Structure probing data (DMS) for a 177-nucleotide construct. For DMS, 504 sequencing reads were counted. Values cover nucleotides 27 to 126. Source: RMDB library 15KREP, as collected in RNAgym. Conditions: 150 mM KOAc, 10 mM MgCl2 and 150 mM bicine (pH 8.5), 24 C.

[RMDB]
RNA sequence: GGGAACGACUCGAGUAGAGUCGAAAAUGAGUUGGAAGCUGCGCAGAAAGCCUAUCAGGAAGCUAUGGACUCUGGUGACACCUCACCACAAGUUCUUAAGGCUUUGCAGAAGGCUGUUAAUAUAGCUAGUCAUCCAUUAGUUCGCUAAUGGAUGACUAAAAGAAACAACAACAACAAC
Reactivity to DMS in 0.01 (KOAc 150mM, MgCl2 10mM, bicine 150mM(pH8.5), 24C), signal-to-noise 1, nucleotides 027 to 126: u000g010a110g010u000u000g000g000a110a160g000c030u050g000c170g040c150a170g050a110a070a030g010c010c010u000a140u000c000a140g000g000a020a000g000c000u020a210u030g010g020a020c000u000c300u010g010g000u010g000a140c250a290c300c210u000c000a010c010c000a050c280a090a050g000u000u020c010u070u000a070a250g000g000c010u000u000u030g000c100a070g000a020a050g000g000c000u000g000u000u010a070a020u000a110u000a100g000c080u000